[RMDB]
RNA sequence: GGGAACGACUCGAGUAGAGUCGAAAACCGAACGCUUCGGCGUUCGGAAGUUGGACGUGAGUCCAACAACUCCUAUCUUCGGAUAGGAGACCGAGGCUCUUCGGAGCCUCGGACCUGCACUACGGUGCAGGACAAGAUGUCUACGGACAUCUUGAACUGCGGCUACGGCCGCAGAACAUCGCGCUACGGCGCGAUGAACAUACAUGCGUGAGCAUGUAUGAACGUGGUACGUACGAUAACGUACAUAGGCGCACUUCGGUGCGCCAAGUCGGUUCUUCGGAACCGACAAAAGAAACAACAACAACAAC
Reactivity to 2A3 in 0.01 (KOAc 150mM, MgCl2 10mM, bicine 150mM(pH8.5), 24C), signal-to-noise 2, nucleotides 027 to 266: c000c000g000a000a000c000g000c000u060u120c300g140g010c000g000u000u010c000g000g000a030a040g000u010u000g000g010a010c030g060u090g140a040g000u000c000c010a000a000c000a000a010c010u000c000c010u010a000u000c010u020u060c230g160g010a000u000a010g010g000a000g010a000c000c000g000a010g000g000c000u010c010u110u200c280g110g000a000g000c010c000u000c000g000g010a000c000c000u000g000c010a010c000u040a060c290g120g000u000g010c000a000g010g000a010c010a000a000g000a000u000g000u000c020u010a010c270g100g000a000c000a000u000c000u000u000g000a060a030c000u000g000c020g010g000c000u020a060c300g160g000c000c000g000c010a000g000a010a030c000a000u010c010g010c010g000c040u070a050c260g160g050c000g000c000g000a000u000g000a020a000c000a010u000a000c000a000u000g010c000g050u100g040a040g000c000a010u000g010u010a000u010g010a030a010c020g000u060g120g000u040a010c000g010u020a010c010g120a250u020a080a020c000g010u020a000c000a010u160a070g000g000c020g000c010a010c000u040u070c200g150g000u000g000c010g000c000c020a000a000

Record summary: This 307-nucleotide RNA was probed chemically with 2A3. Conditions: 150 mM KOAc, 10 mM MgCl2 and 150 mM bicine (pH 8.5), 24 C.